RNA sequence: GGGAACGACUCGAGUAGAGUCGAAAAGAUAUGGAGCUUUCUGAACGUGAGAGCGAUGAAAUCGGAAACGAUGGAGCUCUCUCAGAGAAGCUCCUAAGUCAAACCUUGGUACUUCGGUACCAAGGAAUCUAACAAUCUCGUUCGCGAGAUUGUUAGAAAAAGAAACAACAACAACAAC
Reactivity to DMS in 0.01 (KOAc 150mM, MgCl2 10mM, bicine 150mM(pH8.5), 24C), signal-to-noise 3, nucleotides 027 to 126: g010a040u010a300u000g020g020a030g020c000u000u010u000c010u000g010a040a120c300g030u010g010a010g000a030g010c000g000a080u000g020a060a120a010u000c000g010g010a160a120a160c010g010a030u000g000g010a100g000c000u010c000u000c000u000c010a020g010a060g010a020a010g010c000u010c000c010u000a020a090g010u000c020a120a100a170c010c000u000u000g010g000u000a000c000u000u020c150g020g000u000a010c010c010a000a000g000g010a030a000
Reactivity to 2A3 in 0.01 (KOAc 150mM, MgCl2 10mM, bicine 150mM(pH8.5), 24C), signal-to-noise 2, nucleotides 027 to 126: g000a020u080a060u180g020g010a000g000c020u020u140u010c020u020g110a220a070c140g120u200g050a010g050a010g020c090g060a180u090g050a010a060a020u040c000g000g050a080a040a030c020g000a000u010g000g030a000g000c000u010c020u040c010u000c000a000g010a000g020a030a010g000c000u000c000c010u000a050a010g030u020c020a080a020a150c000c000u000u000g000g010u000a000c000u000u040c260g150g000u000a000c010c000a000a000g000g000a000a040